Background:
Chemical mapping of a 177-nucleotide RNA with 2A3 and DMS. The DMS profile rests on 1,379 reads. Reactivities are given for positions 27 through 126. It was measured as part of the RMDB library OK2TRN.
[RMDB]
RNA sequence: GGGAACGACUCGAGUAGAGUCGAAAAGCACGUUCGUCGAACUGCGCUUCAAGUGAGGCGAUCUUCGCAUAGAGACUCGCUUGUGCGAUAGCCGUCGAGCCCGUGGCGCGAUCCCGACGGAAAGUGAGUGGUGAUACCCUUUCGAGGGUAUCACCACAAAAGAAACAACAACAACAAC
Reactivity to 2A3 in 0.01 (KOAc 150mM, MgCl2 10mM, bicine 150mM(pH8.5), 24C), signal-to-noise 2, nucleotides 027 to 126: g060c000a010c040g020u020u030c010g020u030c030g010a020a030c060u100g000c000g000c000u040u050c040a040a000g020u010g030a010g010g020c020g090a090u030c060u040u060c020g000c030a000u060a060g200a010g040a120c080u060c220g130c050u040u030g000u000g000c010g030a030u080a030g020c070c000g010u030c010g000a010g010c000c020c010g030u030g040g050c020g000c000g010a070u040c040c050c010g000a030c020g010g030a050a050a080g010u020g090a040
Reactivity to DMS in 0.01 (KOAc 150mM, MgCl2 10mM, bicine 150mM(pH8.5), 24C), signal-to-noise 2, nucleotides 027 to 126: g000c020a030c030g020u000u020c000g000u000c010g010a070a050c040u010g000c000g020c000u000u010c220a100a110g020u010g000a300g020g000c020g020a070u000c060u000u000c030g010c050a060u000a020g000a090g020a280c170u030c200g020c020u000u000g020u010g020c060g000a040u010a040g030c300c010g000u000c010g000a300g000c010c050c120g010u000g000g020c020g000c000g000a070u000c110c030c010g010a050c050g010g000a020a030a060g030u010g000a120